[RMDB]
This 177-nucleotide RNA was probed chemically with DMS. It was measured as part of the RMDB library OK2TST. Reactivities are given for positions 27 through 126. The RNA was probed in 150 mM KOAc, 10 mM MgCl2 and 150 mM bicine (pH 8.5) at 24 C.

RNA sequence: GGGAACGACUCGAGUAGAGUCGAAAAAAGAAGAACCAGAACGCCACCCACAGCCCAUGGUCGACGGUGUCGCCGCCGAUGAUGCUGGCGCCCACCACACUUAUCGGCGUCUGCGGGUCACGCUGCCUAAUGACCAGGGAUUCGUCCCUGGUCAUUAAAAAGAAACAACAACAACAAC
Reactivity to DMS in 0.01 (KOAc 150mM, MgCl2 10mM, bicine 150mM(pH8.5), 24C), signal-to-noise 2, nucleotides 027 to 126: a070a100g010a100a170g010a110a080c040c010a080g020a110a090c060g000c030c120a070c020c010c010a080c110a110g010c060c060c040a100u010g000g040u000c050g030a060c100g010g040u000g010u020c050g040c070c000g020c020c020g000a060u010g000a100u000g000c190u000g000g000c060g000c020c010c030a190c030c020a070c050a050c090u010u010a040u000c040g020g000c020g010u000c070u010g000c030g000g020g010u000c050a070c000g010c030u000g000c070c090